[RMDB]
RNA sequence: GGGAACGACUCGAGUAGAGUCGAAAAGAAAAGCAUUUGGUGAGAUGUAUGGAAAGUGUAGAGACCCUGACCAGAUGAGUCAAUGGCCUUCUUCGUUACUCUGUUGACCUUUCUUUAAUUACAGAGUAGUGAUCACUGGUUUCGACCAGUGAUCACUAAAAGAAACAACAACAACAAC
Reactivity to DMS in 0.01 (KOAc 150mM, MgCl2 10mM, bicine 150mM(pH8.5), 24C), signal-to-noise 1, nucleotides 027 to 126: g010a160a050a080a090g010c100a030u020u010u010g020g010u070g010a050g020a050u000g040u010a110u000g010g040a140a000a140g030u010g040u010a120g030a100g000a100c050c040c060u000g020a080c040c020a200g000a130u000g000a070g000u000c060a060a090u000g040g000c050c020u000u000c050u010u000c080g010u010u000a060c000u000c000u000g000u000u010g020a110c140c030u000u000u000c040u020u010u010a060a190u010u010a030c070a020g000a010g000u000